Chemical mapping of a 207-nucleotide RNA with 2A3. For 2A3 the reverse transcriptase was SuperScript II with manganese. Conditions: 150 mM KOAc, 10 mM MgCl2 and 150 mM bicine (pH 8.5), 24 C.
RNA sequence: GGGAACGACUCGAGUAGAGUCGAAAAUUGCUAAACGGUGACUAUGUACUCGAUUACAAUGGCGAUAAAUUUGAUUUGCCAUACAUUUUGGACCGUAUCAAAGUAUUGCACGAAGUUAAAUUGCAAAAAAAUCGAAACGGACCGCCGUCUGUAAAACGUCGCCUUGAUAAUUCGUUAUCAAGGCGACAAAAGAAACAACAACAACAAC
Reactivity to 2A3 in 0.01 (KOAc 150mM, MgCl2 10mM, bicine 150mM(pH8.5), 24C), signal-to-noise 1, nucleotides 027 to 156: u040u030g030c030u070a100a000a000c020g000g010u010g020a000c030u030a040u140g050u110a050c030u000c000g080a050u000u000a030c040a080a010u010g060g000c020g000a000u080a070a140a250u120u030u070g080a080u030u000u220g000c000c000a000u010a010c030a030u020u040u070u090g000g010a130c160c060g040u040a040u040c000a000a000a000g020u000a010u010u030g000c000a000c050g080a010a010g000u030u000a000a160a130u050u110g000c070a000a000a000a000a000a000a060u000c010g000a100a000a040c030g010g020a050c060c010g000c000c030g000u030c030u060g030u060a000a000a110a010c110

For 2A3, 592 sequencing reads were counted.